[RMDB]
RNA sequence: GGGAACGACUCGAGUAGAGUCGAAAAGGGGUGCCGGCGACUGCACGGAGCUGACGCUGGCUGCAUUGGCUGUCCUGGGCUGCAUGAGGGUGAGCAGGGGGAUGGCGGAGCCGACGCGUUGGUGCGGUGAGCGCCCUCGUUUCGACGAGGGCGCUCAAAAAGAAACAACAACAACAAC
Reactivity to 2A3 in 0.01 (KOAc 150mM, MgCl2 10mM, bicine 150mM(pH8.5), 24C), signal-to-noise 1, nucleotides 027 to 126: g020g000g000g060u100g070c080c050g000g000c010g050a060c090u150g040c000a000c030g080g000a080g050c070u050g000a000c000g040c010u010g030g000c000u060g000c070a080u000u270g260g000c000u060g000u010c000c000u010g060g140g030c000u000g000c000a050u120g100a180g090g070g090u000g080a130g000c010a000g040g000g000g000g000a020u040g050g000c000g030g000a000g000c000c000g090a120c070g050c000g020u000u140g030g000u070g000c030g030g000